An RNA of 177 nucleotides, treated with DMS and read out base by base. Conditions: 150 mM KOAc, 10 mM MgCl2 and 150 mM bicine (pH 8.5), 24 C. For DMS the reverse transcriptase was MarathonRT. The data come from the RNA Mapping Database (RMDB), library OK2TST.
[RMDB]
RNA sequence: GGGAACGACUCGAGUAGAGUCGAAAAAACUAGGGAAGAAAGAUUAUGGCAUUGUGGGGCGGACGGUUCAGUCAGGCGGCAGAUCAGCGUUUUAAGCAAUUUAACGAUUCCCUGCGGUUUGAUUACCGCCUUGACUAGCGUUCGCGCUAGUCAAGGCAAAAGAAACAACAACAACAAC
Reactivity to DMS in 0.01 (KOAc 150mM, MgCl2 10mM, bicine 150mM(pH8.5), 24C), signal-to-noise 1, nucleotides 027 to 126: a040a040c110u030a070g000g000g010a060a030g000a130a050a070g000a100u010u000a060u000g000g010c020a130u000u010g000u010g000g020g010g030c040g000g000a020c060g020g000u030u000c140a110g020u000c050a050g000g000c060g010g020c050a020g030a050u010c100a040g000c020g010u000u010u020u000a050a040g010c160a070a040u000u000u000a050a060c090g000a110u010u000c010c050c010u020g000c030g020g010u000u000u000g000a060u000u000a110c050c010